[RMDB]
RNA sequence: GGGAACGACUCGAGUAGAGUCGAAAAUGCUUCGGUUACGUACAUGAUAAACAUGUAUCACUAGGUGUGUCCACCUAGUGCCUGUUCGCCAGUCUAUAGAACGGGCUCAAGGCUGAGGCGACGGUGGACAUCCGUCGCUCUUCGGGGCGAUGGAUGUAAAAGAAACAACAACAACAAC
Reactivity to 2A3 in 0.01 (KOAc 150mM, MgCl2 10mM, bicine 150mM(pH8.5), 24C), signal-to-noise 9, nucleotides 027 to 126: u160g000c010u020u020c010g020g010u060u080a070c070g010u010a000c010a000u020g040a170u170a150a150a040c000a000u010g010u010a020u050c000a000c020u010a010g010g000u020g020u040g120u120c110c010a000c000c000u000a000g000u000g010c000c000u020g000u020u010c020g030c050c020a090g080u080c060u120a150u050a140g030a040a010c020g000g020g000c020u040c090a080a070g040g000c000u020g020a010g020g020c010g000a020c050g060g070u100g060g030
Reactivity to DMS in 0.01 (KOAc 150mM, MgCl2 10mM, bicine 150mM(pH8.5), 24C), signal-to-noise 9, nucleotides 027 to 126: u030g010c020u010u000c020g000g020u000u010a070c220g010u000a010c010a010u000g000a190u060a110a130a210c010a010u000g000u000a010u010c100a050c010u000a010g000g010u000g010u040g000u040c170c010a070c000c000u000a020g010u010g000c010c000u000g010u010u000c030g000c110c110a120g010u030c130u030a120u030a100g010a040a030c040g010g000g000c080u020c150a070a120g000g010c000u000g000a040g000g010c000g010a090c140g000g010u010g010g000
This 177-nucleotide RNA was probed chemically with 2A3 and DMS. Reactivities are rounded to 0.1 and cut off at 0 and 3. Source: RMDB library OK1LIB, as collected in RNAgym. The 2A3 profile rests on 121,090 reads.